[RMDB]
An RNA of 177 nucleotides, treated with DMS and 2A3 and read out base by base. It was measured as part of the RMDB library OK1LIB. For 2A3 the reverse transcriptase was SuperScript II with manganese. The RNA was probed in 150 mM KOAc, 10 mM MgCl2 and 150 mM bicine (pH 8.5) at 24 C. For DMS the reverse transcriptase was MarathonRT.

RNA sequence: GGGAACGACUCGAGUAGAGUCGAAAAGGUCCUUUUCAGGAUGUCCUUCUAUCCACAUCUUCAACUCUAAAUAAAUUGGAAAAUGAAACACUACCUGUUGUGAUUGAAAUGGGCCAAAACAUUUCAAGAGGAAUAAUCUGUUCGCAGAUUAUUCCUCAAAAGAAACAACAACAACAAC
Reactivity to DMS in 0.01 (KOAc 150mM, MgCl2 10mM, bicine 150mM(pH8.5), 24C), signal-to-noise 2, nucleotides 027 to 126: g030g000u010c000c000u000u010u010u010c020a150g000g000a120u000g000u000c060c050u020u030c060u020a050u000c010c020a130c160a000u000c080u000u020c070a050a120c170u020c020u000a040a100a020u010a020a160a150u040u030g000g020a000a080a030a020u000g000a120a010a090c040a050c100u000a090c050c000u010g040u000u000g040u020g030a080u040u000g000a000a000a000u000g030g010g000c050c010a040a100a030a030c090a050u000u000u000c010a030a080
Reactivity to 2A3 in 0.01 (KOAc 150mM, MgCl2 10mM, bicine 150mM(pH8.5), 24C), signal-to-noise 4, nucleotides 027 to 126: g110g000u050c040c000u070u100u020u130c110a030g040g000a040u050g100u080c000c020u020u030c030u040a110u030c020c010a030c010a130u030c040u160u050c040a110a100c050u010c040u140a080a080a120u190a060a170a070u180u050g000g070a080a040a010a070u110g090a100a080a040c080a000c070u060a060c020c060u020g000u080u030g040u040g080a090u020u020g000a030a010a020u020g010g000g080c040c010a060a060a030a050c030a030u040u100u030c010a050a050